[RMDB]
RNA sequence: GGGAACGACUCGAGUAGAGUCGAAAAGAUGCGCGAUUAAUCCAUGCGGAGAAAGCGCGGUAGGAACGGUAUCGCGGGUACUUUGCAGUAACGUCAACAAUCCCUGACGGAUUUUGGUUAAUUGCCGUACACCGACUGGUUUCGACCAGUCGGUGUAAAAAGAAACAACAACAACAAC
Reactivity to DMS in 0.01 (KOAc 150mM, MgCl2 10mM, bicine 150mM(pH8.5), 24C), signal-to-noise 1, nucleotides 027 to 126: g010a100u010g000c110g050c000g010a000u020u000a000a050u010c060c140a090u040g040c030g000g000a020g010a030a080a280g000c030g000c010g010g000u000a030g020g020a190a080c260g000g030u000a070u000c000g010c010g000g000g000u010a150c020u000u010u030g020c000a040g000u010a130a130c020g000u010c000a020a160c120a080a180u000c000c000c030u000g000a020c000g000g010a210u000u000u000u000g000g000u000u000a040a010u010u000g000c050c010g000
Reactivity to 2A3 in 0.01 (KOAc 150mM, MgCl2 10mM, bicine 150mM(pH8.5), 24C), signal-to-noise 1, nucleotides 027 to 126: g070a080u150g050c020g000c000g090a020u020u000a030a000u000c080c110a070u080g030c000g030g020a010g060a110a040a050g180c010g000c070g010g020u030a040g070g170a290a080c200g140g070u010a000u010c000g010c000g030g030g050u050a030c000u060u080u010g000c010a010g020u040a020a070c000g020u020c010a070a000c000a080a190u000c010c000c040u030g050a000c010g080g030a110u120u100u250u240g000g000u010u010a020a010u000u070g000c020c020g040